[RMDB]
RNA sequence: GGGAACGACUCGAGUAGAGUCGAAAAAUGGUAUGUAAGCAUGCGGAGCAUUGGUAGCUGGCUCCUAAAUAUCGGUUAUCAAACAAUUAAUUGGCGAAAACAAUUACGCUCUCGCUGCCUAAUCGAAGUACAGUAGAUUACUGGCUUUAUUCGACUACUUUCAACCUCUGUUCGCAGAGGUUGAAAGAAAAGAAACAACAACAACAAC
Reactivity to 2A3 in 0.01 (KOAc 150mM, MgCl2 10mM, bicine 150mM(pH8.5), 24C), signal-to-noise 1, nucleotides 027 to 156: a010u280g010g030u170a080u130g070u230a070a080g000c000a010u180g000c030g000g000a000g010c040a060u000u020g000g000u030a000g040c000u030g050g050c020u120c010c060u120a070a030a020u200a060u110c000g000g020u020u000a000u000c000a010a040a070c040a050a060u060u000a070a000u020u010g070g020c130g110a060a040a050a040c000a000a000u040u000a010c090g000c020u000c040u040c030g010c010u030g000c020c000u000a030a030u060c100g030a000a000g030u020a300c010a000g030u120a010g000a170u080u060a000c000u020g010g020c000u070u060u070a140u070u070c030g030a020c080u040a000